[RMDB]
RNA sequence: GGGAACGACUCGAGUAGAGUCGAAAAGGGCCUAGUUUUCAGUCUUGGGCACUGUGGCAACUUCUUCCUGGAUAUGGCUUGAAAAACCAUGGGUAAGUUCUGAUUCAUUAGGAAUGUAGGGGCUGUCUCGUAAUCGCAACUUCGGUUGCGAUUACGAAAAAGAAACAACAACAACAAC
Reactivity to 2A3 in 0.01 (KOAc 150mM, MgCl2 10mM, bicine 150mM(pH8.5), 24C), signal-to-noise 1, nucleotides 027 to 126: g010g000g050c000c020u040a050g010u030u030u090u130c060a040g100u090c080u150u140g010g020g180c010a020c070u050g010u070g160g000c010a050a100c070u020u020c000u070u080c020c010u030g030g000a140u080a050u230g030g040c050u000u060g000a100a050a010a020a050c010c030a100u100g000g000g000u140a060a040g000u120u010c050u110g040a070u100u080c050a050u060u110a040g080g090a080a040u050g030u070a040g040g000g010g040c010u030g030u050c010
Reactivity to DMS in 0.01 (KOAc 150mM, MgCl2 10mM, bicine 150mM(pH8.5), 24C), signal-to-noise 1, nucleotides 027 to 126: g000g010g000c000c010u000a070g020u000u010u020u000c050a110g010u030c100u010u000g030g000g010c050a030c070u000g040u000g010g040c000a080a080c080u000u000c100u010u010c010c010u010g080g020a070u020a090u010g010g000c010u000u000g000a070a120a120a100a060c040c010a030u000g020g000g000u000a040a030g010u010u000c030u020g010a130u000u010c060a100u000u000a080g030g010a030a060u010g020u000a150g010g020g010g000c070u010g010u000c030

This 177-nucleotide RNA was probed chemically with 2A3 and DMS. DMS adducts were read by reverse transcription with MarathonRT.